[RMDB]
RNA sequence: GGGAACGACUCGAGUAGAGUCGAAAAUGGGAAUACAUCAAGGAACAAGAGUGAAAUGACCCCUCCCCUCCAUUCAUAUGUGAAGAAUUCCCAGAAACAAUGCAGAGGGCAAAAGGAAUUGGCACUGGUGUGAACAUUCAUUCGUGAAUGUUCACACAAAAGAAACAACAACAACAAC
Reactivity to DMS in 0.01 (KOAc 150mM, MgCl2 10mM, bicine 150mM(pH8.5), 24C), signal-to-noise 1, nucleotides 027 to 126: u000g000g000g000a140a000u000a120c120a160u010c080a050a070g000g000a090a070c100a150a070g040a100g030u000g000a070a100a140u000g000a250c010c000c000c090u000c050c000c000c010u000c010c020a010u000u010c080a000u020a110u000g030u000g020a100a040g000a080a080u000u000c010c010c010a030g010a060a040a080c110a030a010u000g030c080a010g000a020g060g000g000c160a030a010a060a010g010g010a020a070u000u000g020g000c040a080c150u000g010